[RMDB]
RNA sequence: GGGAACGACUCGAGUAGAGUCGAAAAUGUGAUUUCGAUCACACUAAAACCUUUGUGCCUUUGUCAGCUCGGUGGGUGGGUGGCCCAUUGGGCCACCGUAACAUCCCACUGAGCUUGGAUUUAAGGCACUCUGGUAGAAUGGAGGUUUCGACCUCAAUGCUACAUGGAAUUUCGAUUCCAUGUAGCAAAAAGAAACAACAACAACAAC
Reactivity to DMS in 0.01 (KOAc 150mM, MgCl2 10mM, bicine 150mM(pH8.5), 24C), signal-to-noise 2, nucleotides 027 to 156: u020g010u000g010a030u000u000u000c280g060a050u000c030a030c000a070c050u010a080a100a140a080c000c010u000u000u000g010u000g020c000c020u010u000u000g020u010c030a050g010c010u000c010g030g020u000g010g000g020u010g000g020g050u000g010g030c000c010c000a280u000u010g070g050g030c000c000a010c000c000g030u000a040a060c050a100u000c010c010c010a010c030u000g000a010g000c000u010u000g000g000a040u010u000u000a030a010g030g000c010a010c000u000c010u000g020g030u000a080g010a110a140u000g020g000a020g010g010u010u010u000c110g020a080c010c000u000c000a020a130
Reactivity to 2A3 in 0.01 (KOAc 150mM, MgCl2 10mM, bicine 150mM(pH8.5), 24C), signal-to-noise 2, nucleotides 027 to 156: u070g000u000g010a010u070u140u210c210g150a000u000c000a010c030a000c040u110a000a160a100a100c000c000u000u000u000g010u000g000c000c030u000u000u000g020u000c020a020g000c000u000c020g030g030u000g010g010g000u020g020g000g000u010g030g000c000c050c000a300u190u300g010g030g030c000c000a000c000c000g000u000a060a040c000a220u180c000c000c000a000c000u020g020a000g030c000u000u000g000g000a000u280u250u180a000a000g000g000c010a010c000u010c000u000g000g010u020a020g080a150a090u070g080g020a080g000g000u180u240u300c250g180a030c000c020u030c010a010a030